The record gives the reactivity of an RNA of 207 nucleotides to 2A3 and DMS. For DMS, 3,040 sequencing reads were counted. 2A3 is a SHAPE reagent: it acylates the 2'-hydroxyl of flexible nucleotides of all four kinds. Values cover nucleotides 27 to 156. Conditions: 150 mM KOAc, 10 mM MgCl2 and 150 mM bicine (pH 8.5), 24 C.
[RMDB]
RNA sequence: GGGAACGACUCGAGUAGAGUCGAAAAAGUUUGUAUAAGCACUGUUUAAGCUUCCCAGUGCAUGCCAAUUGGUGUUUACAGACGAGUAUGGUAUUGACCAUAUGAUACUAUUCUCUCUCUCAGGAGAGGAGAAUAGAUAACUACAAAGGAGGCACAAGCACCAUUUAGGAUUCGUCCUAAAUGGUGCAAAAGAAACAACAACAACAAC
Reactivity to 2A3 in 0.01 (KOAc 150mM, MgCl2 10mM, bicine 150mM(pH8.5), 24C), signal-to-noise 4, nucleotides 027 to 156: a000g030u030u010u010g040u010a100u020a190a110g000c000a000c010u010g060u070u080u090a120a020g000c000u000u000c010c010c000a010g000u000g000c010a010u050g020c020c000a230a300u110u280g000g000u030g030u050u120u000a020c010a020g030a020c020g030a040g040u030a010u010g000g020u060a130u170u280g180a060c000c000a000u020a010u050g080a040u040a080c000u000a010u010u000c000u000c000u000c000u000c010u010c080a100g250g000a010g020a020g100g040a020g000a000a000u000a000g010a000u030a030a090c070u160a070c110a060a070a020g000g000a000g010g030c010a010c040a070a050
Reactivity to DMS in 0.01 (KOAc 150mM, MgCl2 10mM, bicine 150mM(pH8.5), 24C), signal-to-noise 1, nucleotides 027 to 156: a090g010u000u000u000g010u000a100u000a090a250g000c030a030c000u020g010u000u000u010a020a140g010c020u000u000c030c080c010a090g020u020g080c010a140u000g000c020c000a080a190u000u000g000g020u000g000u010u000u000a120c070a100g030a100c060g010a200g030u000a000u000g020g050u000a200u000u010g020a120c010c010a020u000a010u000g010a250u000a120c020u000a000u000u000c000u000c000u000c000u000c000u000c130a180g020g000a050g000a020g010g020a030g000a000a000u000a000g000a090u000a020a060c050u010a070c080a040a120a070g010g000a040g020g010c000a030c050a050a300